[RMDB]
RNA sequence: GGGAACGACUCGAGUAGAGUCGAAAAGCCGCCUGCAAGUCGAAAUUGCGCUGUGCUCCUGUGCUACGGCCUGUGGCUGGACUGCCUGCUGCUGCCCAACUGGCUGGCAAGAUGAAGCUCUCCCUGGCUAGAAAGUUACCUUCGGGUAACUUUCUAGAAAAGAAACAACAACAACAAC
Reactivity to 2A3 in 0.01 (KOAc 150mM, MgCl2 10mM, bicine 150mM(pH8.5), 24C), signal-to-noise 6, nucleotides 027 to 126: g030c020c000g030c010c010u050g010c040a060a050g050u060c010g110a040a090a150u140u070g010c040g000c030u040g040u070g050c020u040c010c020u070g030u080g040c010u040a040c040g050g000c010c010u080g020u050g040g000c020u020g030g040a050c020u070g040c010c000u040g010c010u010g000c000u040g010c000c000c010a040a070c040u060g020g020c010u020g020g000c020a030a020g030a070u120g050a070a010g000c000u000c010u030c010c000c010u010g040g010
Reactivity to DMS in 0.01 (KOAc 150mM, MgCl2 10mM, bicine 150mM(pH8.5), 24C), signal-to-noise 4, nucleotides 027 to 126: g020c030c030g020c050c020u000g010c050a050a060g000u000c070g010a080a110a080u010u020g010c040g010c060u000g000u010g020c040u010c050c030u010g000u040g010c040u030a100c080g000g010c030c040u030g000u030g010g000c010u000g000g010a130c090u000g010c010c000u010g000c040u000g010c070u010g000c010c000c030a100a130c100u010g000g020c020u020g010g000c060a060a080g000a110u010g020a140a140g010c020u010c040u010c010c000c020u010g020g010